[RMDB]
Structure probing data (2A3 and DMS) for a 177-nucleotide construct.
For DMS the reverse transcriptase was MarathonRT.
The reactions ran in a buffer of 150 mM KOAc, 10 mM MgCl2 and 150 mM bicine (pH 8.5), at 24 C.
For DMS, 2,853 sequencing reads were counted.
Values cover nucleotides 27 to 126.
RNA sequence: GGGAACGACUCGAGUAGAGUCGAAAAGAUUCUGGAAGCUCAUUUUGGAGCAGCAGUUCCUAGCGCACUGCACAGGGACACGGGUUCACCUCACGGCAGCAGGUGGGGCGAAGGCGUACCGCGACACCUCAUUCUCCAAGUUCGCUUGGAGAAUGAGAAAAGAAACAACAACAACAAC
Reactivity to 2A3 in 0.01 (KOAc 150mM, MgCl2 10mM, bicine 150mM(pH8.5), 24C), signal-to-noise 2, nucleotides 027 to 126: g020a050u110u060c030u030g050g090a110a020g010c010u000c050a090u130u170u200u300g180g000a020g000c030a020g000c010a020g030u030u020c010c010u020a030g010c040g020c060a070c080u100g020c070a050c030a110g000g000g070a010c030a020c040g070g000g000u040u060c030a030c010c010u030c010a010c030g070g000c020a040g020c030a030g100g000u010g010g020g000g000c020g010a040a000g060g050c010g020u020a030c010c030g010c000g050a020c000a050c030
Reactivity to DMS in 0.01 (KOAc 150mM, MgCl2 10mM, bicine 150mM(pH8.5), 24C), signal-to-noise 3, nucleotides 027 to 126: g000a170u000u000c020u000g010g010a180a150g010c020u020c010a190u000u010u010u000g040g000a020g000c010a140g020c090a050g010u000u010c010c010u010a100g020c090g000c060a080c070u000g000c060a100c090a090g000g000g000a050c110a070c060g020g000g010u000u010c020a050c060c010u000c080a060c040g000g000c070a040g000c070a040g010g010u010g010g000g000g020c050g010a090a090g020g010c060g010u010a080c030c020g020c070g000a070c070a100c160